The record gives the reactivity of an RNA of 207 nucleotides to 2A3 and DMS. Conditions: 150 mM KOAc, 10 mM MgCl2 and 150 mM bicine (pH 8.5), 24 C. High 2A3 reactivity points to a flexible backbone, as in loops and unpaired stretches.
RNA sequence: GGGAACGACUCGAGUAGAGUCGAAAAGUGUACUUUGAAAGUGCAAAUUAUAAGUCCGUUGUGGACCCUGAAUAUGACUUUGUGCACGUCACGUCUGAGGAUGGCGGGAUCACUUGGAGUGAUAUUAAGUCUCUCAAGAGCUUGAAGACGUCAAAUGCGUUAGAUAAAGAUUCGUCUUUAUCUAACGAAAAGAAACAACAACAACAAC
Reactivity to 2A3 in 0.01 (KOAc 150mM, MgCl2 10mM, bicine 150mM(pH8.5), 24C), signal-to-noise 6, nucleotides 027 to 156: g040u020g000u030a030c050u100u180u230g160a170a100a020g040u040g040c010a020a040a130u240u170a150u100a140a010g020u000c010c030g080u090u140g040u160g050g020a040c000c010c060u060g090a080a040u150a070u100g050a040c000u030u040u100g050u050g020c050a010c070g030u020c030a010c030g040u000c020u040g030a050g090g020a120u100g030g030c030g020g030g030a020u030c020a010c130u020u080g090g040a050g020u030g020a000u010a020u070u090a060a030g030u000c010u010c000u010c070a090a050g030a020g070c040u080u100g030a030a020g020a000c010g000u050c050a020a040a110u150g030
Reactivity to DMS in 0.01 (KOAc 150mM, MgCl2 10mM, bicine 150mM(pH8.5), 24C), signal-to-noise 3, nucleotides 027 to 156: g020u010g020u000a020c050u000u000u010g040a050a220a060g020u010g000c000a040a130a130u000u000a140u010a050a110g000u000c010c030g030u000u010g010u010g010g010a060c000c020c040u000g000a090a090u000a060u000g030a050c010u000u000u000g030u000g020c070a080c090g000u000c040a070c020g020u010c050u000g010a150g010g010a090u000g020g010c050g010g000g000a150u000c050a060c030u000u000g000g010a100g020u000g020a070u000a090u000u000a060a110g010u010c020u000c030u000c030a040a110g000a060g020c030u000u000g020a080a060g020a080c050g010u000c060a030a100a100u000g010
2A3 adducts were read by reverse transcription with SuperScript II with manganese. It was measured as part of the RMDB library OK3TST.